The record gives the reactivity of an RNA of 177 nucleotides to DMS. The DMS profile rests on 2,044 reads. Source: RMDB library TTRDEL, as collected in RNAgym. The reactions ran in a buffer of 150 mM KOAc, 10 mM MgCl2 and 150 mM bicine (pH 8.5), at 24 C.
RNA sequence: GGGAACGACUCGAGUAGAGUCGAAAAGAUAUGGAUUGUUGGGAGAUGCCAGUCGGAAACGACUGUGUCAUCGACGAUCAAUGUCCUAAGUCAAAGAAAUGUGCUCGCUUCGGCGAGCACAUUUCAAUCAAUUAUUUACCUUCGGGUAAAUAAUUGAAAAAGAAACAACAACAACAAC
Reactivity to DMS in 0.01 (KOAc 150mM, MgCl2 10mM, bicine 150mM(pH8.5), 24C), signal-to-noise 1, nucleotides 027 to 126: g010a010u000a070u020g000g010a020u010u010g030u000u000g010g000g020a040g000a000u000g010c010c000a000g010u010c010g010g020a010a020a040c000g010a010c000u010g010u000g000u020c000a000u000c000g000a160c220g000a050u010c000a000a020u000g020u000c000c010u000a020a120g000u000c000a110a110a190g030a010a000a000u000g010u000g000c000u000c060g000c010u000u020c250g000g020c030g000a020g010c000a010c000a000u000u000u020c010a050a150